[RMDB]
About this RNA
Chemical mapping of a 207-nucleotide RNA with 2A3. Source: RMDB library OK3TST, as collected in RNAgym.
RNA sequence: GGGAACGACUCGAGUAGAGUCGAAAAGUACGAACUCACACGUGUACUCACGAGUACUCUCACUCGUUCUCUCACGUACGUUCGAUCACACACGAGAACGAUCACGAACACGUGUGUUCGUGUACGAUCUCACGAUCGAUCGAGUGAGAUCGUGAGAUGGACUGCACAGGUUCGCCUGUGCAGUCCAAAAAGAAACAACAACAACAAC
Reactivity to 2A3 in 0.01 (KOAc 150mM, MgCl2 10mM, bicine 150mM(pH8.5), 24C), signal-to-noise 1, nucleotides 027 to 156: g030u030a000c020g020a080a060c040u100c090a080c010a000c120g080u050g030u090a090c020u040c030a030c020g020a010g060u010a120c030u030c020u020c080a000c000u030c000g020u030u010c050u000c000u000c030a070c190g080u190a000c020g030u110u100c030g000a070u020c000a030c020a010c030a060c100g010a010g030a030a020c020g080a200u010c020a010c100g040a040a010c040a050c060g210u150g080u040g000u050u000c010g000u000g010u050a100c010g000a070u020c000u030c000a050c000g000a000u050c000g020a020u040c010g000a020g020u040g000a000g000a000u000c000g000u010g000a040g000a010